[RMDB]
RNA sequence: GGGAACGACUCGAGUAGAGUCGAAAAGAUAUGGAACCGCCACCUUCAACAGCUCGGAAACGAGACAUGAAGAGUGGUCGGUUCCUAAGUCAAAACACUAUAUGCGUGUUCGCACGCAUAUAGUGAAGUUCCACGGUUAGUUCGCUAACCGUGGAACAAAAGAAACAACAACAACAAC
Reactivity to DMS in 0.01 (KOAc 150mM, MgCl2 10mM, bicine 150mM(pH8.5), 24C), signal-to-noise 1, nucleotides 027 to 126: g010a080u010a300u000g000g000a000a010c000c000g000c050c000a000c010c010u020u000c000a030a080c220a140g000c010u000c000g000g000a120a070a150c040g010a020g020a030c110a180u010g000a010a000g000a060g020u000g030g040u020c020g010g010u000u000c010c000u000a000a010g000u000c030a050a030a080a090c010a010c000u000a000u000a010u000g010c000g000u000g010u020u000c190g080c000a030c000g000c000a000u000a000u000a000g000u000g000a000a060
Reactivity to 2A3 in 0.01 (KOAc 150mM, MgCl2 10mM, bicine 150mM(pH8.5), 24C), signal-to-noise 1, nucleotides 027 to 126: g000a000u090a010u120g010g000a000a000c020c020g070c000c000a010c020c000u000u020c010a130a120c020a190g080c000u000c000g010g060a100a140a070c000g010a020g050a050c020a040u080g000a000a010g230a140g000u030g020g000u050c010g000g000u000u000c010c010u000a020a010g030u020c040a000a070a120a020c000a000c010u000a000u000a000u020g010c010g020u030g080u080u090c260g060c090a010c010g040c000a000u000a000u000a030g000u010g000a000a020

Annotation:
Source: RMDB library TTRDEL, as collected in RNAgym. Structure probing data (DMS and 2A3) for a 177-nucleotide construct. The reactions ran in a buffer of 150 mM KOAc, 10 mM MgCl2 and 150 mM bicine (pH 8.5), at 24 C. DMS adducts were read by reverse transcription with MarathonRT.